The record gives the reactivity of an RNA of 177 nucleotides to 2A3 and DMS. The DMS profile rests on 1,888 reads. The reactions ran in a buffer of 150 mM KOAc, 10 mM MgCl2 and 150 mM bicine (pH 8.5), at 24 C. Source: RMDB library TTRDES, as collected in RNAgym. For DMS the reverse transcriptase was MarathonRT.
[RMDB]
RNA sequence: GGGAACGACUCGAGUAGAGUCGAAAAGAUAUGGAUGGCCGAGACAUGUCCCUUAUUCGGAAACGAAUAAGCGGACAACAGCUCGGACCAUCCUAAGUCAAAAGUCUCCCUGUUCGCAGGGAGACAACGAUUGUACUAGCUUCGGCUAGUACAAUCGAAAAGAAACAACAACAACAAC
Reactivity to 2A3 in 0.01 (KOAc 150mM, MgCl2 10mM, bicine 150mM(pH8.5), 24C), signal-to-noise 1, nucleotides 027 to 126: g010a000u010a020u060g000g010a000u000g000g000c020c050g000a000g000a020c240a300u300g000u000c020c010c020u000u040a000u000u010c000g000g000a010a000a010c000g010a010a000u010a000a000g030c140g080g000a010c000a000a000c000a020g000c000u000c000g010g000a020c010c000a000u000c000c010u000a000a000g010u000c010a000a000a110a140g000u000c000u010c000c000c000u020g030u070u100c300g000c090a000g010g010g020a000g000a000c000a000a000
Reactivity to DMS in 0.01 (KOAc 150mM, MgCl2 10mM, bicine 150mM(pH8.5), 24C), signal-to-noise 2, nucleotides 027 to 126: g000a010u000a030u000g000g000a010u000g000g000c000c010g010a020g000a000c050a300u020g040u000c000c000c000u000u000a000u000u010c000g030g000a000a010a030c000g020a010a030u000a000a000g000c300g040g010a010c000a050a010c270a170g000c000u000c000g000g000a110c000c000a000u000c000c000u000a000a050g000u010c020a060a090a090a160g030u010c010u000c000c000c000u000g010u000u020c300g000c010a020g000g030g010a000g000a000c010a030a050